[RMDB]
RNA sequence: GGGAACGACUCGAGUAGAGUCGAAAAAACUGGAAGGCGAAAGAAUAGGAGCUGACAGGACACCGAAGCUUCUAGGAGUAACAUUCCAGUGUCUGCAGGGGAUGGCAACACAUGCGGCCGAAACGAGCAGUUCAGGACAUUUCGAUGUCCUGAACUGAAAAGAAACAACAACAACAAC
Reactivity to 2A3 in 0.01 (KOAc 150mM, MgCl2 10mM, bicine 150mM(pH8.5), 24C), signal-to-noise 2, nucleotides 027 to 126: a000a030c000u000g000g010a010a010g050g000c010g000a050a020a020g100a230a110u040a020g000g010a000g000c010u010g080a100c100a040g040g010a050c080a010c110c030g010a080a010g000c000u040u010c000u010a030g030g000a020g010u030a020a020c000a070u010u000c000c000a000g000u010g090u180c040u050g010c000a010g020g050g030g060a050u040g000g040c010a030a000c070a010c010a120u180g000c010g030g000c020c010g020a070a110a070c040g010a010g070
Reactivity to DMS in 0.01 (KOAc 150mM, MgCl2 10mM, bicine 150mM(pH8.5), 24C), signal-to-noise 3, nucleotides 027 to 126: a040a040c020u000g000g000a010a020g000g020c000g000a170a160a170g020a060a150u010a000g000g000a000g030c000u000g000a240c300a050g000g000a150c300a100c010c020g020a270a010g000c000u000u000c000u000a010g020g080a050g000u000a090a100c020a000u000u000c000c000a000g000u000g000u000c000u000g010c010a060g000g000g000g000a040u010g000g060c060a080a050c110a040c060a120u040g000c110g030g020c030c000g020a020a080a090c160g000a100g000
Source information:
Source: RMDB library OK1LIB, as collected in RNAgym. Chemical mapping of a 177-nucleotide RNA with 2A3 and DMS. The RNA was probed in 150 mM KOAc, 10 mM MgCl2 and 150 mM bicine (pH 8.5) at 24 C.